[RMDB]
RNA sequence: GGGAACGACUCGAGUAGAGUCGAAAAUUUUUCUUAUGCGUUAUCCUGGAACUUUGGCGAUGGGGCCGGGAGGGCCAAGCGUAUCAUCGAUCUGUCGGUCGGUAUGGUAAGUGACGCAAGCUGUAUGCAAUAACUCAGUGUUCGCACUGAGUUAUUGAAAAGAAACAACAACAACAAC
Reactivity to DMS in 0.01 (KOAc 150mM, MgCl2 10mM, bicine 150mM(pH8.5), 24C), signal-to-noise 4, nucleotides 027 to 126: u010u000u000u000u000c020u000u010a110u010g010c020g010u000u000a070u000c030c020u000g010g010a060a050c060u000u010u010g020g010c040g010a140u010g000g010g010g010c040c030g020g010g010a060g000g020g010c020c030a040a080g010c060g010u000a040u000c050a030u000c020g000a030u000c050u010g010u010c130g000g010u010c020g030g000u010a030u000g010g010u000a050a100g020u010g000a060c060g010c040a070a120g000c120u000g000u010a080u000g010
Reactivity to 2A3 in 0.01 (KOAc 150mM, MgCl2 10mM, bicine 150mM(pH8.5), 24C), signal-to-noise 3, nucleotides 027 to 126: u030u040u000u030u000c010u030u120a040u130g020c000g010u010u060a050u120c000c000u010g030g050a050a060c010u060u070u120g050g000c050g120a130u150g010g000g090g060c030c010g060g020g020a030g020g020g000c030c010a050a020g070c020g010u050a030u050c010a010u040c010g040a030u020c030u140g260u120c080g020g010u010c030g000g030u070a040u040g050g000u050a060a050g030u010g020a010c010g000c020a020a020g030c040u080g010u120a080u150g080